[RMDB]
RNA sequence: GGGAACGACUCGAGUAGAGUCGAAAAGAUAUGGAGGUAGCCGAUAAGAUGGUAUCGGAAACGAUAUUCAUCUUUUGACGGCUGCUCCUAAGUCAAAGACGCACUCUUCUUCGGAAGAGUGCGUCAACAUAUAUCAUUGGUUCGCCAAUGAUAUAUGAAAAGAAACAACAACAACAAC
Reactivity to 2A3 in 0.01 (KOAc 150mM, MgCl2 10mM, bicine 150mM(pH8.5), 24C), signal-to-noise 6, nucleotides 027 to 126: g030a020u080a040u140g010g010a020g130g200u150a000g000c010c010g050a090u070a200a040g000a000u020g010g010u000a000u000c010g010g020a060a030a010c010g000a010u020a020u210u300c010a000u010c000u010u030u030u050g100a030c000g000g000c000u000g000c010u010c000c000u030a110a010g040u020c030a080a070a160g000a000c000g000c010a000c000u020c000u030u010c010u050u140c300g030g010a000a000g000a000g000u000g000c000g000u000c000a000a000
Reactivity to DMS in 0.01 (KOAc 150mM, MgCl2 10mM, bicine 150mM(pH8.5), 24C), signal-to-noise 7, nucleotides 027 to 126: g000a040u000a300u000g000g000a020g020g020u010a000g020c000c000g020a120u000a020a020g000a010u000g000g000u000a000u000c000g010g000a060a060a140c010g010a010u000a010u000u010c000a000u000c000u000u000u000u000g010a200c070g010g010c000u000g010c000u010c000c000u000a030a120g000u010c030a090a090a140g000a010c010g010c000a010c000u000c000u000u000c000u000u020c180g020g000a010a000g000a010g010u000g000c000g000u000c000a010a070

The record gives the reactivity of an RNA of 177 nucleotides to 2A3 and DMS.
DMS adducts were read by reverse transcription with MarathonRT.
Source: RMDB library TTRDEL, as collected in RNAgym.